Background:
Structure probing data (2A3 and DMS) for a 170-nucleotide construct. It was measured as part of the RMDB library 15KLIB. The DMS profile rests on 35,589 reads.
RNA sequence: GGGAACGACUCGAGUAGAGUCGAAAACACAGUCUGGUGCCCACGACACGUAAUGUGCCCGGCUGACCAGUUGUCUGAUCCUAAUUAUGAUGCCUUGUUGAUUUCUAUGACUAAUCAUAGUUUCAGUUACCAACCUUGUUCGCAAGGUUGAAAAGAAACAACAACAACAAC
Reactivity to 2A3 in 0.01 (KOAc 150mM, MgCl2 10mM, bicine 150mM(pH8.5), 24C), signal-to-noise 9, nucleotides 027 to 129: c040a000c000a000g050u010c010u020g000g000u070g000c000c010c010a080c140g090a030c010a000c030g160u220a230a140u290g010u010g020c010c030c010g000g000c000u040g080a100c000c010a010g010u050u040g050u040c020u020g070a080u050c000c010u010a060a040u110u090a060u140g120a030u090g070c020c060u070u060g050u020u030g090a300u080u090u000c040u050a110u120g020a060c030u110a160a080u090c060a070u060a110g010u000u010u040c030a040g020u030u030a090c010
Reactivity to DMS in 0.01 (KOAc 150mM, MgCl2 10mM, bicine 150mM(pH8.5), 24C), signal-to-noise 6, nucleotides 027 to 129: c170a030c050a070g020u000c030u020g010g000u000g030c030c010c080a090c270g020a120c010a020c030g040u070a090a080u060g030u000g060c030c020c150g020g030c030u040g030a040c000c000a050g020u040u030g020u030c080u030g020a140u000c010c020u000a040a030u040u050a000u000g040a060u010g010c170c120u000u000g000u010u020g000a110u020u010u000c020u000a000u050g030a070c130u060a130a060u030c030a030u000a000g030u010u000u000c130a000g020u000u000a110c180
Description:
Reactivities are rounded to 0.1 and cut off at 0 and 3.